The data come from the RNA Mapping Database (RMDB), library OK2TST. Structure probing data (DMS) for a 177-nucleotide construct. High DMS reactivity at an A or C suggests that its Watson-Crick edge is free. The DMS profile rests on 1,664 reads.

RNA sequence: GGGAACGACUCGAGUAGAGUCGAAAAAGCCCCGGGGCUGCGUUUCCUGAGACCUGGCCGCAGCCUCCGCGGGUGGCAAGCGGGCUGGGGAGAGCCGAGGGCCAAAGGAAGAGAAAAUCGCGGGGAGAUUAUCCCACUCAUUCGUGAGUGGGAUAAUAAAAGAAACAACAACAACAAC
Reactivity to DMS in 0.01 (KOAc 150mM, MgCl2 10mM, bicine 150mM(pH8.5), 24C), signal-to-noise 2, nucleotides 027 to 126: a220g010c040c000c000c010g000g010g000g020c020u010g020c010g010u020u010u010c000c010u000g020a160g010a070c080c050u000g000g010c300c000g010c000a030g000c000c010u010c000c010g000c120g030g000g020u000g010g020c140a040a080g010c100g000g000g000c080u040g010g000g020g020a090g000a120g010c040c070g000a120g020g000g020c050c050a040a100a100g020g010a030a020g000a120g000a080a040a050a070u000c080g000c110g000g000g000g000a120g010